The record gives the reactivity of an RNA of 177 nucleotides to 2A3 and DMS. The reactions ran in a buffer of 150 mM KOAc, 10 mM MgCl2 and 150 mM bicine (pH 8.5), at 24 C.
RNA sequence: GGGAACGACUCGAGUAGAGUCGAAAAUCGACAUCUGUUUCUCUACAAUUUGCACUCAUUGGAGCCAUACAGAAUAAAAUGUCUAAUGCUGCUUCCACAAAUAUUUGAGGACUGCUAACACAUUUCCAAUAAUAAUACACUUCGGUGUAUUAUUAUUAAAAGAAACAACAACAACAAC
Reactivity to 2A3 in 0.01 (KOAc 150mM, MgCl2 10mM, bicine 150mM(pH8.5), 24C), signal-to-noise 9, nucleotides 027 to 126: u100c030g030a010c010a070u050c040u040g030u020u090u010c010u000c010u040a070c040a110a100u040u060u140g070c060a040c040u090c040a070u020u100g030g010a020g010c020c010a050u080a110c040a060g110a100a030u190a150a120a040a040u120g020u000c030u050a040a040u080g020c030u030g010c010u110u010c010c000a030c040a030a140a050u230a110u090u080u120g030a030g000g020a030c020u020g010c020u060a070a010c020a010c020a120u030u040u010c010c000
Reactivity to DMS in 0.01 (KOAc 150mM, MgCl2 10mM, bicine 150mM(pH8.5), 24C), signal-to-noise 6, nucleotides 027 to 126: u040c090g000a040c070a030u010c030u000g010u010u010u010c010u010c030u010a080c110a050a040u010u030u010g020c070a070c060u020c070a070u010u020g010g000a070g000c200c110a040u020a070c090a040g000a080a070u020a070a040a070a060u020g010u010c030u010a050a080u020g000c080u010g000c080u020u000c020c030a070c050a030a080a130u020a090u010u020u020g010a100g000g010a040c060u000g000c020u010a090a100c160a060c080a070u010u010u000c020c040